[RMDB]
RNA sequence: GGGAACGACUCGAGUAGAGUCGAAAAGGGCGUCACCUGGGUGACCUUCGACCGCGGCAGCGGGUCCAGCGGCAACCCCACCAGCGACAUCUACGUCGGGGUCGCGGACAAGCAGAACACGAUCUACCGCAGCACCGACGCCGGGGCCACCUGGGAAAGUAUGGCAAGGAUUCGUCCUUGCCAUACUAAAAGAAACAACAACAACAAC
Reactivity to 2A3 in 0.01 (KOAc 150mM, MgCl2 10mM, bicine 150mM(pH8.5), 24C), signal-to-noise 1, nucleotides 027 to 156: g040g050g040c090g040u120c100a060c080c000u060g000g000g030u050g030a100c000c000u100u280c050g040a120c090c060g040c010g000g030c060a020g030c020g000g010g040u030c000c010a070g010c000g020g070c050a080a090c000c010c000c000a020c040c050a050g090c000g100a070c030a170u100c080u290a080c070g040u090c050g010g000g000g000u000c000g000c000g000g000a010c040a090a000g060c050a030g020a020a050c040a020c220g030a100u050c050u150a010c000c000g000c000a000g010c000a090c040c000g070a180c070g000c030c000g000g000g000g000c010c000a000c000c000u000g000g000g000a000a070